Chemical mapping of a 177-nucleotide RNA with DMS and 2A3.
RNA sequence: GGGAACGACUCGAGUAGAGUCGAAAAGAUAUGGAAAGCGCAUGUCGAAUCCUACGGUCGGAAACGACCGAGGACAUGUGACAUGAACUACGCUUUCCUAAGUCAAACGAUACCUUCGGGUAUCGAAGUUAUUUUUCGUGUUCGCACGAAAAAUAACAAAAGAAACAACAACAACAAC
Reactivity to DMS in 0.01 (KOAc 150mM, MgCl2 10mM, bicine 150mM(pH8.5), 24C), signal-to-noise 1, nucleotides 027 to 126: g000a050u000a300u010g020g010a000a030a000g020c000g020c010a010u010g010u000c000g020a230a180u000c020c000u000a070c000g030g010u000c000g010g010a110a100a230c010g030a000c000c000g020a030g000g000a030c250a090u000g030u020g020a010c030a030u030g000a170a110c150u020a300c060g010c000u000u000u000c000c000u000a000a080g010u000c010a110a070a300c020g000a010u000a020c000c000u000u030c280g040g000g020u000a000u000c000g000a050a090
Reactivity to 2A3 in 0.01 (KOAc 150mM, MgCl2 10mM, bicine 150mM(pH8.5), 24C), signal-to-noise 2, nucleotides 027 to 126: g000a020u080a020u130g000g010a010a000a000g050c000g000c070a020u030g020u040c020g030a040a120u000c060c000u080a300c010g010g000u000c000g000g000a060a050a100c020g000a000c000c030g000a000g000g000a010c050a180u300g110u230g100a010c010a010u010g000a080a060c110u170a040c150g010c000u000u010u000c000c000u000a090a020g030u040c040a090a060a050c020g000a010u000a000c000c000u060u070c290g110g030g000u010a000u000c010g010a010a000
It was measured as part of the RMDB library TTRDES.